[RMDB]
RNA sequence: GGGAACGACUCGAGUAGAGUCGAAAAACAUCCAGAUCUCAAACUUGCGUUCAAUUACUCAUCGUCAUUUGCAUGGUCCGAAGAAGAUGACCCACUUACCUUCGAAGAACUUGGUGAUCUUGGAUACAAAUACAUCUUCAUUACACUUGCCGGAUUACACAUAAUGAUCGUUCGCGAUCAUUAUGUGAAAAGAAACAACAACAACAAC
Reactivity to 2A3 in 0.01 (KOAc 150mM, MgCl2 10mM, bicine 150mM(pH8.5), 24C), signal-to-noise 9, nucleotides 027 to 156: a000c030a020u000c010c000a010g010a070u040c040u040c100a120a130a160c050u050u100g030c040g060u080u070c060a090a110u090u080a090c050u050c100a120u090c090g080u020c020a060u050u040u140g070c050a050u070g040g030u050c040c020g020a050a030g010a020a000g030a070u100g050a040c000c010c010a040c010u040u120a090c010c010u030u050c050g080a120a090g030a090a080c050u060u090g030g020u060g040a020u000c000u030u110g000g010a010u030a100c060a000a100a010u120a050c040a070u020c000u060u030c010a060u060u100a050c080a030c070u050u070g030c020c020g070g040a050u120u140a030
Reactivity to DMS in 0.01 (KOAc 150mM, MgCl2 10mM, bicine 150mM(pH8.5), 24C), signal-to-noise 3, nucleotides 027 to 156: a100c060a110u000c060c040a100g000a050u000c020u000c040a060a060a100c060u000u000g030c060g010u000u000c050a110a120u000u010a010c040u000c020a060u010c040g030u000c040a060u010u000u000g020c080a100u010g010g010u020c010c030g030a090a190g000a070a040g020a050u000g000a110c030c030c050a110c090u000u000a040c050c030u000u000c020g000a140a140g000a050a100c050u010u000g020g060u010g010a020u000c020u000u000g020g000a120u000a160c110a020a050a120u000a070c050a030u000c040u000u000c010a080u000u000a060c040a070c070u000u000g020c010c020g000g000a070u000u000a160